[RMDB]
RNA sequence: GGGAACGACUCGAGUAGAGUCGAAAAGAAAGAAAGAAGCGAGCUGGCGCAGCCGCACGGGCAACCGUCAAUCCAGCACUUCAAAAGUCUUGUCGUUCUGACAGGACAUCCAUCAACCCACCGGGAAAAAAGGACUACAGCUUCGGCUGUAGUCCAACCAUACUUGAUUCUUCGGAAUCAAGUAUGGAAAAGAAACAACAACAACAAC
Reactivity to DMS in 0.01 (KOAc 150mM, MgCl2 10mM, bicine 150mM(pH8.5), 24C), signal-to-noise 1, nucleotides 027 to 156: g000a140a170a210g040a110a140a160g000a050a010g010c020g040a220g050c020u000g020g030c000g010c180a290g020c090c060g020c040a130c100g030g000g020c030a070a040c090c000g010u020c070a150a140u010c030c000a030g000c040a050c020u000u000c020a050a080a100a210g000u000c000u020u000g000u000c000g000u000u000c140u000g010a030c010a020g000g000a020c000a070u010c040c040a030u000c100a060a190c030c010c020a150c150c070g010g040g000a010a100a140a080a130a140g010g030a010c000u000a030c000a020g020c040u000u000c300g140g090c010u000g050u000a000g010u000c000c000a000a010
Reactivity to 2A3 in 0.01 (KOAc 150mM, MgCl2 10mM, bicine 150mM(pH8.5), 24C), signal-to-noise 4, nucleotides 027 to 156: g030a010a050a000g040a020a100a020g020a050a010g040c060g070a020g010c010u000g020g000c080g030c120a050g100c080c150g060c070a030c020g000g000g010c070a090a080c040c000g020u040c030a020a030u030c010c010a010g020c030a030c010u030u050c010a040a110a040a030g010u000c010u000u000g000u000c010g110u250u180c170u240g010a000c000a000g010g000a000c000a020u000c000c020a040u060c010a040a120c010c000c020a040c110c100g040g020g060a020a070a030a050a040a110g010g000a060c000u000a000c000a010g000c000u050u140c250g180g000c000u000g000u000a000g000u010c010c000a000a000

Description: Chemical mapping of a 207-nucleotide RNA with DMS and 2A3. It was measured as part of the RMDB library M2RFPK. For 2A3 the reverse transcriptase was SuperScript II with manganese. The DMS profile rests on 1,205 reads. Conditions: 150 mM KOAc, 10 mM MgCl2 and 150 mM bicine (pH 8.5), 24 C.